This 177-nucleotide RNA was probed chemically with 2A3. The RNA was probed in 150 mM KOAc, 10 mM MgCl2 and 150 mM bicine (pH 8.5) at 24 C. It was measured as part of the RMDB library RFM100.

RNA sequence: GGGAACGACUCGAGUAGAGUCGAAAAUUGUGUUAUAUGAUGUGGAUUAAUAGAAACAGUUGUGGGUAUUCAUAUUUCAUAGUGAGAGGUAAAAUUCUUGGAUCUAUGGAAGAUGAACUACUGCGAAGUCGGAUAAUACCUUCGGGUAUUAUCCGACAAAAGAAACAACAACAACAAC
Reactivity to 2A3 in 0.01 (KOAc 150mM, MgCl2 10mM, bicine 150mM(pH8.5), 24C), signal-to-noise 1, nucleotides 027 to 126: u090u080g010u030g050u260u190a290u090a080u120g080a220u100g090u030g260g000a090u140u130a120a140u030a010g120a080a160a000c080a000g000u000u010g000u050g030g100g000u000a000u050u040c000a000u000a000u000u010u010c000a000u000a040g030u090g000a010g000a010g000g030u240a010a210a000a000u180u000c000u050u000g060g020a000u000c000u000a000u000g000g010a000a000g000a000u000g000a000a050c090u120a000c000u000g180c000g040a040a000